The data come from the RNA Mapping Database (RMDB), library OK1LIB. This 177-nucleotide RNA was probed chemically with DMS and 2A3. The reactions ran in a buffer of 150 mM KOAc, 10 mM MgCl2 and 150 mM bicine (pH 8.5), at 24 C. Values cover nucleotides 27 to 126.
RNA sequence: GGGAACGACUCGAGUAGAGUCGAAAAUUUUGGGCCCAAAGUGGUUUCGCUAUCUGUCAUGACUAGCGAUCCUGAGUCAUUGACACUUCGUUUUGCAGCGUAAGUUUUAUGGUCAUGCUAUAUGUAAAUUAAUAUGCUCCUUCGGGAGCAUAUUAAUAAAAGAAACAACAACAACAAC
Reactivity to DMS in 0.01 (KOAc 150mM, MgCl2 10mM, bicine 150mM(pH8.5), 24C), signal-to-noise 3, nucleotides 027 to 126: u010u030u030u010g000g040g010c010c000c000a040a110a110g010u010g010g020u000u000u000c000g000c050u000a020u010c070u020g000u060c080a020u010g000a010c130u000a030g000c060g010a030u010c070c010u020g000a110g000u000c040a050u000u020g000a040c050a070c050u000u000c080g060u000u020u000u010g000c170a110g000c010g010u050a020a100g010u000u010u050u010a060u010g010g000u000c010a040u020g010c040u000a050u020a030u030g000u010a060a070
Reactivity to 2A3 in 0.01 (KOAc 150mM, MgCl2 10mM, bicine 150mM(pH8.5), 24C), signal-to-noise 2, nucleotides 027 to 126: u070u080u060u130g050g080g040c000c000c000a010a010a000g090u090g020g170u020u100u030c070g000c020u060a050u160c000u050g260u020c040a040u070g000a080c010u010a000g000c000g040a080u020c010c050u050g060a010g040u070c000a130u080u100g030a000c020a000c020u000u020c010g090u040u020u120u080g080c060a020g000c000g030u170a000a060g020u020u030u060u110a120u140g110g000u070c030a030u050g020c020u130a060u020a000u300g080u110a060a040